Source: RMDB library OK1LIB, as collected in RNAgym. This 177-nucleotide RNA was probed chemically with DMS and 2A3.
[RMDB]
RNA sequence: GGGAACGACUCGAGUAGAGUCGAAAAGAAAGAUAGCUCUAGAGAUCUGCUGUCCAACAUUCUACCUAGAGUCAAUAAUAAUGUAUUGUGCAUGUAGUAUUUAUUAAGAUGAUAGAUCUCAUGUUAACGAUCAUUAGGCAUUCGUGCCUAAUGAUCGAAAAGAAACAACAACAACAAC
Reactivity to DMS in 0.01 (KOAc 150mM, MgCl2 10mM, bicine 150mM(pH8.5), 24C), signal-to-noise 3, nucleotides 027 to 126: g040a120a070a030g000a080u010a090g000c040u000c040u010a130g000a040g000a060u010c030u000g000c010u010g000u010c010c060a090a180c230a050u020u000c010u010a080c070c030u020a060g000a120g020u030c120a030a090u050a140a090u020a040a050u030g010u020a070u010u000g010u010g030c030a080u010g000u050a030g010u010a000u000u000u000a010u000u000a070a150g010a140u070g010a040u010a010g000a000u000c000u000c010a080u020g000u000u010a090a140
Reactivity to 2A3 in 0.01 (KOAc 150mM, MgCl2 10mM, bicine 150mM(pH8.5), 24C), signal-to-noise 6, nucleotides 027 to 126: g080a000a100a000g070a030u150a000g010c010u010c040u080a070g020a020g030a230u040c040u040g010c020u020g080u050c030c000a030a050c020a060u050u030c010u020a090c020c020u060a040g010a010g040u060c020a030a000u140a110a030u130a100a090u170g090u120a080u060u130g080u080g040c030a020u020g070u170a040g010u090a040u030u030u030a050u060u090a170a110g050a130u300g000a000u020a010g000a010u000c020u000c010a000u020g010u030u120a030a040
Notes:
The reactions ran in a buffer of 150 mM KOAc, 10 mM MgCl2 and 150 mM bicine (pH 8.5), at 24 C. For DMS the reverse transcriptase was MarathonRT.